[RMDB]
RNA sequence: GGGAACGACUCGAGUAGAGUCGAAAAAUAGACGAAGGUGGAACGAUCGUUAGCAGCAACUCCAGAACAGAGACUGGAUCACCCACCAGAACAGAGACGGGAUCACGCACAAGUAAUUUAAUGGGAGACACCUUUGUAAGUUCGCUUACAAAGGUGUAAAAGAAACAACAACAACAAC
Reactivity to 2A3 in 0.01 (KOAc 150mM, MgCl2 10mM, bicine 150mM(pH8.5), 24C), signal-to-noise 2, nucleotides 027 to 126: a010u120a030g010a030c060g000a020a050g050g000u060g000g040a070a060c090g010a010u000c030g040u140u100a080g130c000a000g010c040a040a050c050u020c010c030a050g040a170a000c030a040g140a040g080a250c010u020g010g000a020u040c030a040c020c000c020a000c010c010a000g030a040a010c040a030g110a000g040a090c020g020g010g000a010u060c050a000c070g080c000a010c010a070a030g060u070a060a140u100u120u150a120a110u150g050g020g000a050g000
Reactivity to DMS in 0.01 (KOAc 150mM, MgCl2 10mM, bicine 150mM(pH8.5), 24C), signal-to-noise 4, nucleotides 027 to 126: a050u000a100g010a080c100g010a120a100g010g030u020g010g000a100a100c110g010a040u000c040g000u010u010a140g020c020a030g010c040a080a020c030u000c020c040a070g020a090a060c200a040g010a070g010a110c020u000g010g000a050u010c050a120c070c020c010a110c040c030a070g000a090a070c120a080g000a080g010a060c060g000g000g000a060u010c030a030c050g000c100a060c140a050a120g000u010a050a040u000u010u010a040a080u020g010g000g010a140g000

An RNA of 177 nucleotides, treated with 2A3 and DMS and read out base by base. It was measured as part of the RMDB library OK2TRN. The RNA was probed in 150 mM KOAc, 10 mM MgCl2 and 150 mM bicine (pH 8.5) at 24 C. The DMS profile rests on 2,863 reads.